An RNA of 177 nucleotides, treated with 2A3 and DMS and read out base by base. Conditions: 150 mM KOAc, 10 mM MgCl2 and 150 mM bicine (pH 8.5), 24 C. For 2A3 the reverse transcriptase was SuperScript II with manganese. The DMS profile rests on 2,197 reads. The 2A3 profile rests on 852 reads. It was measured as part of the RMDB library OK1LIB.
RNA sequence: GGGAACGACUCGAGUAGAGUCGAAAAAGGUGAAGACUUUCGAGGACAAGAAGACAGGCGAGAUUACUGAACGUAUGGUCCUUGGAACUCGUGAGCUGGCCCGUCAGUGGUUGACCUACGGUAUGUCGUGGAUCAGAAAGUUCGCUUUCUGAUCCACAAAAGAAACAACAACAACAAC
Reactivity to 2A3 in 0.01 (KOAc 150mM, MgCl2 10mM, bicine 150mM(pH8.5), 24C), signal-to-noise 2, nucleotides 027 to 126: a000g130g000u060g040a080a040g140a110c000u000u080u000c000g040a030g000g020a070c030a030a030g110a050a010g000a020c000a010g000g150c050g000a110g020a080u160u240a190c050u040g100a200a050c000g020u080a100u160g110g000u000c000c000u010u070g000g010a070a010c000u020c010g010u040g010a050g060c030u000g000g000c060c000c000g040u050c060a040g050u120g080g060u090u070g060a080c000c000u080a080c090g060g000u060a030u170g200u030c030
Reactivity to DMS in 0.01 (KOAc 150mM, MgCl2 10mM, bicine 150mM(pH8.5), 24C), signal-to-noise 2, nucleotides 027 to 126: a070g010g030u010g000a130a110g040a050c090u010u000u000c020g020a100g020g050a130c000a020a050g010a130a210g000a160c000a050g000g000c100g000a130g010a170u020u050a170c120u020g000a040a120c040g000u000a150u000g000g030u010c000c000u000u000g030g040a060a020c110u030c110g000u020g020a160g000c000u000g000g030c000c030c010g000u030c130a030g000u040g030g030u000u000g000a070c140c050u000a050c120g000g000u020a060u000g000u000c090